[RMDB]
RNA sequence: GGGAACGACUCGAGUAGAGUCGAAAAGGGCUGAAAGCUGAUCGCGCCGCGCGGAAUCGUCAUGCGCGUGUCGAUCCGGUCGAUCUCGGUCGUGCAGCCGAUCGCGAUCUCGUCGAGAUGGCGCAGAAUAAUGAUCCAGCUUCGGCUGGAUCAUUAUAAAAGAAACAACAACAACAAC
Reactivity to DMS in 0.01 (KOAc 150mM, MgCl2 10mM, bicine 150mM(pH8.5), 24C), signal-to-noise 2, nucleotides 027 to 126: g030g000g030c000u000g020a070a110a140g010c110u000g000a020u000c000g010c110g040c040c040g000c090g010c000g000g000a060a140u020c190g030u010c060a080u000g020c030g010c020g010u000g010u000c020g000a010u010c020c050g000g010u010c060g020a050u000c030u000c070g000g030u000c040g030u010g010c120a070g010c050c000g020a080u000c010g000c050g060a020u000c030u000c010g010u010c110g000a050g020a080u000g000g020c010g010c140a110g000a110
Reactivity to 2A3 in 0.01 (KOAc 150mM, MgCl2 10mM, bicine 150mM(pH8.5), 24C), signal-to-noise 1, nucleotides 027 to 126: g070g000g000c020u060g050a150a030a040g020c040u030g030a020u010c020g000c000g070c070c030g000c000g000c040g000g200a070a160u240c030g140u130c090a170u140g030c000g040c020g020u050g000u050c040g000a020u000c020c020g030g060u070c030g010a100u000c060u010c060g050g000u020c030g080u110g070c090a030g120c000c000g030a050u020c000g050c000g130a030u000c020u000c060g170u100c080g000a010g020a040u130g060g000c000g030c020a000g040a100